[RMDB]
RNA sequence: GGGAACGACUCGAGUAGAGUCGAAAAUACUAGUUGGCGACCGAUAGUGAACAAGUACCGCGAGGGAAAGGUGAAAAGAACCGCUGUGAGCGGAGUGAAAUAGAACCUGAAACCGUAUGUCUACAAAAACCCAGAUUAGCUUCGGCUAAUCUGGGUUAAAAGAAACAACAACAACAAC
Reactivity to DMS in 0.01 (KOAc 150mM, MgCl2 10mM, bicine 150mM(pH8.5), 24C), signal-to-noise 1, nucleotides 027 to 126: u030a020c050u000a060g000u000u000g010g000c170g000a130c110c000g000a070u000a030g050u000g000a130a020c070a010a030g000u010a090c010c000g000c130g000a170g090g040g010a120a060a040g000g000u000g000a060a110a040a070g000a080a150c000c050g010c000u020g060u050g000a100g030c040g030g030a000g000u030g000a070a040a110u000a070g000a210a020c000c020u010g030a040a070a090c090c020g000u000a010u000g010u000c050u000a010c040a020a060a120
Background
The record gives the reactivity of an RNA of 177 nucleotides to DMS. The RNA was probed in 150 mM KOAc, 10 mM MgCl2 and 150 mM bicine (pH 8.5) at 24 C. It was measured as part of the RMDB library RFM100.